RNA sequence: GGGAACGACUCGAGUAGAGUCGAAAAGAGGUUAUGGUUCGACAAAUGUUACGUAAAGUUAGAAUUAUCGAAGCAGGUGAUACGAAGUUAUUACCAGGUUCAUUAGUUGAUAUUCAUAACUUUACAGCAGGGGCGAAAAAUUCGUUUUUCGCCCCUGAAAAGAAACAACAACAACAAC
Reactivity to 2A3 in 0.01 (KOAc 150mM, MgCl2 10mM, bicine 150mM(pH8.5), 24C), signal-to-noise 3, nucleotides 027 to 126: g040a000g020g060u050u030a120u200g070g040u040u030c010g020a010c040a000a170a060u070g040u110u180a040c100g010u030a000a000a030g020u020u000a020g000a010a030u220u050a000u090c030g000a000a000g100c030a020g020g040u020g000a010u000a000c030g260a300a080g020u110u000a000u000u020a000c000c000a000g010g110u040u070c160a090u040u060a080g100u070u160g000a010u000a000u060u010c050a040u000a060a000c000u030u000u000a000c000a000g030
Reactivity to DMS in 0.01 (KOAc 150mM, MgCl2 10mM, bicine 150mM(pH8.5), 24C), signal-to-noise 1, nucleotides 027 to 126: g010a020g000g000u000u000a020u000g000g020u030u000c100g000a120c160a080a100a110u040g000u020u020a090c190g040u000a020a010a000g000u000u000a000g000a000a010u000u040a000u000c000g000a000a080g000c040a020g000g000u000g010a000u000a010c000g000a170a160g030u040u020a000u000u040a000c000c000a050g000g010u000u020c090a140u030u000a100g020u030u100g000a000u040a000u000u000c050a070u000a000a000c030u060u000u000a020c000a190g000